[RMDB]
RNA sequence: GGGAACGACUCGAGUAGAGUCGAAAAUUCAGUCACUUAAUGACUUCAGGCCGUGACUAUGAUGUGAGAGAGGUCAGAUCUUCAUCCUGCCACAUCGUGGCUUCUGGCUGGAGGCUGGGAAGGACUGUAACAUUUGCAACCAGAUCUGUCCUUUCUAGCACCUCCUGAUAUUCGUAUCAGGAGGUGCAAAAGAAACAACAACAACAAC
Reactivity to 2A3 in 0.01 (KOAc 150mM, MgCl2 10mM, bicine 150mM(pH8.5), 24C), signal-to-noise 1, nucleotides 027 to 156: u030u020c010a000g030u000c050a100c270u040u190a110a060u110g040a010c030u010u000c000a020g130g050c000c000g010u010g030a000c000u030a060u040g000a070u050g000u020g070a160g010a010g020a020g090g030u040c120a030g050a270u100c060u150u060c190a170u140c000c070u030g030c000c000a030c000a040u010c050g030u000g020g000c000u090u020c000u050g000g000c000u010g010g000a010g000g010c100u100g000g010g150a080a020g040g010a050c050u010g050u120a050a030c030a010u120u100u150g070c040a010a070c060c010a070g010a140u060c000u070g090u170c030c000u000u020u010c000u010a000

Chemical mapping of a 207-nucleotide RNA with 2A3. It was measured as part of the RMDB library OK3TST. The reactions ran in a buffer of 150 mM KOAc, 10 mM MgCl2 and 150 mM bicine (pH 8.5), at 24 C.